Structure probing data (DMS and 2A3) for a 177-nucleotide construct. For 2A3 the reverse transcriptase was SuperScript II with manganese. For DMS the reverse transcriptase was MarathonRT. It was measured as part of the RMDB library M2PK50.
RNA sequence: GGGAACGACUCGAGUAGAGUCGAAAAUACCAAUGGUUCGCCAUUGGUACUUGUAUUGACGAAUACUAGCGUAGAAGUAUUCAGGUCUCAUAACUACGGAUAUACACUAGAGUUUCGACUCUAGUAACAUAUCCACAACAUUCGUGUUGUGGAUAUGAAAAGAAACAACAACAACAAC
Reactivity to DMS in 0.01 (KOAc 150mM, MgCl2 10mM, bicine 150mM(pH8.5), 24C), signal-to-noise 7, nucleotides 027 to 126: u000a000c000c000a000a010u000g000g020u000u020c240g030c010c000a010u010u000g000g000u000a000c050u000u000g020u010a130u010u010g010a150c160g000a020a010u000a010c000u000a050g020c030g030u000a010g000a110a020g000u000a010u000u000c010a110g010g000u000c010u000c020a070u010a100a120c020u000a010c020g010g000a130u010a110u000a120c190a050c000u000a010g000a010g010u000u000u010c170g020a050c000u000c000u000a000g000u000a040a130
Reactivity to 2A3 in 0.01 (KOAc 150mM, MgCl2 10mM, bicine 150mM(pH8.5), 24C), signal-to-noise 9, nucleotides 027 to 126: u030a000c010c000a000a000u010g000g030u030u060c240g040c070c000a000u000u010g010g000u010a020c000u040u120g120u110a170u080u210g090a030c060g010a020a000u000a010c010u020a040g140c010g060u040a020g030a140a000g020u010a010u010u020c010a040g070g120u010c030u010c050a110u100a210a110c030u040a020c030g050g060a080u060a020u030a220c100a010c030u000a000g000a000g010u020u100u090c180g080a020c000u000c000u000a000g000u000a000a010